[RMDB]
RNA sequence: GGGAACGACUCGAGUAGAGUCGAAAACCACAGAUCUUCGGAUCUGUGGAAACAACAAAUACUGUCAGUUGAGACAGACACAAAUACAUUGAGUGUACAAUGAAAGCGAUUGCUUCGGCAAUCGCAAGUCAAAUUUUAACUUCGGUUAAAAUUUGACAAAAGAAACAACAACAACAAC
Reactivity to DMS in 0.01 (KOAc 150mM, MgCl2 10mM, bicine 150mM(pH8.5), 24C), signal-to-noise 2, nucleotides 027 to 126: c000c000a010c010a020g000a010u000c000u000u010c300g010g010a010u000c000u000g030u000g000g000a010a030a060c090a060a120c080a060a100a200u010a210c010u000g020u000c000a170g060u020u010g040a120g000a000c020a060g020a170c160a010c030a040a090a060u020a100c070a040u000u000g000a290g010u000g000u010a130c090a050a050u000g000a060a080a100g030c000g020a020u000u000g010c000u020u000c160g030g020c000a000a000u000c010g020c000a020a040
Reactivity to 2A3 in 0.01 (KOAc 150mM, MgCl2 10mM, bicine 150mM(pH8.5), 24C), signal-to-noise 3, nucleotides 027 to 126: c000c000a000c000a010g000a010u000c020u060u220c230g130g000a000u000c010u000g010u020g000g000a060a050a010c020a000a020c020a020a120a050u190a170c010u020g000u020c040a160g020u140u170g180a090g010a100c020a000g030a030c020a000c000a040a150a000u250a040c050a070u030u140g050a020g160u110g040u100a060c020a040a100u090g100a190a110a030g000c000g010a000u000u000g010c000u050u070c230g080g000c000a000a000u010c000g010c000a000a000